Record summary: The record gives the reactivity of an RNA of 207 nucleotides to 2A3 and DMS. 2A3 adducts were read by reverse transcription with SuperScript II with manganese.
RNA sequence: GGGAACGACUCGAGUAGAGUCGAAAAGGGAUAAGGGAGUACUCUUAUCCCCACGUGGUUGGUGACAACCACGAUUAACGGGAGGUGGCCCGCUCCCACCUCACUGAGUGCUCUCCACGCCUUCGGGCCUGGUUUGCACGCAGGUAACAGAGCUCAAACUAAAUGAGGGAUUCGUCCCUCAUUUAGUAAAAGAAACAACAACAACAAC
Reactivity to 2A3 in 0.01 (KOAc 150mM, MgCl2 10mM, bicine 150mM(pH8.5), 24C), signal-to-noise 3, nucleotides 027 to 156: g020g010g010a020u040a020a010g010g000g020a130g190u220a300c000u010c000u000u000a010u010c000c000c000c010a040c010g010u000g000g000u000u000g000g030u050g030a030c000a000a010c000c000a000c000g010a030u060u170a100a060c090g030g090g010a000g000g040u030g000g020c070c080c070g010c010u000c000c000c000a000c000c000u020c010a020c000u020g010a010g030u000g000c000u000c000u000c010c000a000c020g010c000c020u030u080c180g060g000g000c010c000u000g000g010u000u000u000g000c010a000c000g010c020a020g030g030u040a090a020c070a100g020a010g030c020u060c160a170a170
Reactivity to DMS in 0.01 (KOAc 150mM, MgCl2 10mM, bicine 150mM(pH8.5), 24C), signal-to-noise 1, nucleotides 027 to 156: g020g000g040a050u000a040a000g000g000g000a300g030u020a110c010u000c010u000u000a020u010c010c000c000c010a000c000g040u000g000g060u010u010g010g000u010g000a300c020a020a000c020c000a010c000g030a110u000u010a070a100c090g030g040g030a020g020g030u000g000g020c000c020c180g000c020u000c140c000c000a050c070c010u000c060a160c000u020g020a000g030u000g000c000u010c000u010c010c000a020c090g010c020c000u010u010c300g050g010g050c010c040u000g000g000u000u010u000g030c000a030c000g000c030a020g010g010u000a090a120c130a070g010a170g000c010u000c040a100a200